Source: RMDB library RFMREP, as collected in RNAgym. An RNA of 177 nucleotides, treated with DMS and 2A3 and read out base by base. Reactivities are given for positions 27 through 126. The 2A3 profile rests on 1,536 reads. The RNA was probed in 150 mM KOAc, 10 mM MgCl2 and 150 mM bicine (pH 8.5) at 24 C. DMS adducts were read by reverse transcription with MarathonRT.
[RMDB]
RNA sequence: GGGAACGACUCGAGUAGAGUCGAAAAUGCGUCACGCAAGUGGGCCGAGGGUCGACUCCUGUGACGAAGGGGCUUCGAGGCACUGUCCCGCCCCGGAAAGUGGCAAAAAGGAGCACUUCGGUGCUCCCUUAAAAUGCCUCUUCGGAGGCAUUUUAAGAAAAGAAACAACAACAACAAC
Reactivity to DMS in 0.01 (KOAc 150mM, MgCl2 10mM, bicine 150mM(pH8.5), 24C), signal-to-noise 3, nucleotides 027 to 126: u020g000c030g000u000c000a010c010g010c300a060a070g010u000g020g020g010c000c020g020a170g020g060g060u000c000g010a030c020u010c090c090u020g010u010g000a030c020g000a090a080g000g020g020g000c070u000u010c120g000a170g010g000c010a080c100u000g010u000c010c010c020g000c010c000c000c040g010g010a030a140a060g010u010g000g010c090a060a070a090a100a100g020g000a020g000c000a010c000u000u000c140g030g010u000g010c000u010c010c010
Reactivity to 2A3 in 0.01 (KOAc 150mM, MgCl2 10mM, bicine 150mM(pH8.5), 24C), signal-to-noise 2, nucleotides 027 to 126: u120g010c000g000u000c000a000c000g010c030a040a050g010u030g030g030g010c040c040g180a200g200g050g000u030c030g100a020c020u030c010c070u070g010u000g000a010c000g000a050a070g020g050g000g000c020u110u080c110g050a140g040g000c070a060c140u090g020u040c000c010c020g040c010c000c000c010g010g030a110a060a010g070u100g060g080c050a000a000a010a110a080g010g010a000g020c000a000c000u020u070c180g020g000u010g010c000u000c000c000